Structure probing data (DMS and 2A3) for a 170-nucleotide construct. The data come from the RNA Mapping Database (RMDB), library 15KLIB. Conditions: 150 mM KOAc, 10 mM MgCl2 and 150 mM bicine (pH 8.5), 24 C. Values are in units of 0.01, from 0 to 300, in steps of 10. For DMS the reverse transcriptase was MarathonRT. For DMS, 12,422 sequencing reads were counted.
RNA sequence: GGGAACGACUCGAGUAGAGUCGAAAAUCUGUAAAGAGGAGACUGCUGGACUCUCCGCCCAAGCCGAGAUGGGCCUCAGUUCCGAGCGAAGAGCCGAACCGGGAAGAGGAAGCGCCCGAGAGGGAGCAAGGGCGCGUGUUCGCACGCGCCAAAAGAAACAACAACAACAAC
Reactivity to DMS in 0.01 (KOAc 150mM, MgCl2 10mM, bicine 150mM(pH8.5), 24C), signal-to-noise 4, nucleotides 027 to 129: u030c030u000g030u030a050a080a040g020a070g050g020a070g000a110c000u030g030c120u040g050g030a070c080u020c090u000c100c090g000c030c050c010a070a140g050c040c050g060a020g010a010u000g000g000g000c000c000u000c060a100g000u070u020c040c060g030a050g030c050g030a050a020g030a100g040c000c110g040a000a000c130c080g000g000g000a060a070g010a090g030g000a060a070g030c100g030c070c020c010g000a070g000a160g000g000g000a030g000c100a100a080g050
Reactivity to 2A3 in 0.01 (KOAc 150mM, MgCl2 10mM, bicine 150mM(pH8.5), 24C), signal-to-noise 4, nucleotides 027 to 129: u020c010u040g070u100a010a070a060g050a040g020g020a020g000a020c020u060g050c040u050g060g030a040c010u020c000u000c060c020g000c000c000c000a050a020g020c020c000g030a010g000a020u060g000g000g000c000c020u010c010a020g020u100u020c020c020g010a020g020c060g000a030a050g020a020g030c030c070g020a020a020c020c020g020g010g000a020a020g020a010g030g030a040a030g020c020g020c060c010c000g030a030g020a040g030g020g020a010g000c030a030a070g020